[RMDB]
RNA sequence: GGGAACGACUCGAGUAGAGUCGAAAAUAACUCCUCCCGCGAGAGCCGCUAAGGUGGAAACGCUAUGCGGUACUGCCUGUUAGGGUGCUUGCGAGUGCCGCGGGAGGUCUCGUAGAAAAUAACCUAACAGUUCAAGUUAGUUCGCUAACUUGAACUGAAAAGAAACAACAACAACAAC
Reactivity to DMS in 0.01 (KOAc 150mM, MgCl2 10mM, bicine 150mM(pH8.5), 24C), signal-to-noise 4, nucleotides 027 to 126: u000a120a150c140u030c010c000u000c000c000c000g020c000g020a030g000a300g040c010c000g000c020u010a070a130g000g010u000g000g000a110a080a150c020g010c010u010a300u010g000c000g000g000u000a040c010u000g010c010c000u010g000u000u010a300g000g000g010u000g040c010u010u010g000c000g000a030g000u000g000c010c000g020c000g010g010g010a020g020g010u000c000u000c010g000u010a160g020a090a070a090a160u000a090a120c060c060u010a080a220
Reactivity to 2A3 in 0.01 (KOAc 150mM, MgCl2 10mM, bicine 150mM(pH8.5), 24C), signal-to-noise 2, nucleotides 027 to 126: u100a030a040c020u020c020c000u000c020c000c000g010c000g010a020g000a000g020c000c010g000c040u060a150a080g070g000u010g000g040a050a110a000c010g000c020u030a030u130g020c030g010g000u010a030c000u000g000c000c000u030g030u030u040a040g000g040g000u010g000c020u060u110g000c020g000a010g030u010g000c010c000g000c000g000g000g000a010g010g000u000c010u000c000g000u020a010g130a010a140a020a030u120a050a040c010c060u040a060a060